[RMDB]
RNA sequence: GGGAACGACUCGAGUAGAGUCGAAAAAGCGAUAAAAGUUGGCUCUUUUAUGGGGGCCACUGCAAACGAAACAGUUUUGUCUUGGUAUUAUUGGCCGAUCAGACCUGUUCCGUCUGCUGUAGUUUUUGAAACAGACACAGUUCGCUGUGUCUGUUUCAAAAGAAACAACAACAACAAC
Reactivity to 2A3 in 0.01 (KOAc 150mM, MgCl2 10mM, bicine 150mM(pH8.5), 24C), signal-to-noise 2, nucleotides 027 to 126: a000g140c160g030a080u140a100a210a070a000g110u070u020g000g000c000u050c000u010u050u020u110a250u150g050g000g000g030g000c010c000a030c000u000g000c020a010a010a010c010g040a000a000a000c000a000g000u000u000u000u040g010u010c120u020u130g050g010u120a080u140u120a240u140u300g190g010c000c000g000a010u000c010a010g000a030c000c000u000g000u040u000c010c010g000u020c030u000g010c060u070g030u030a100g000u000u000u000u000u000
Chemical mapping of a 177-nucleotide RNA with 2A3. Reactivities are given for positions 27 through 126. For 2A3, 508 sequencing reads were counted.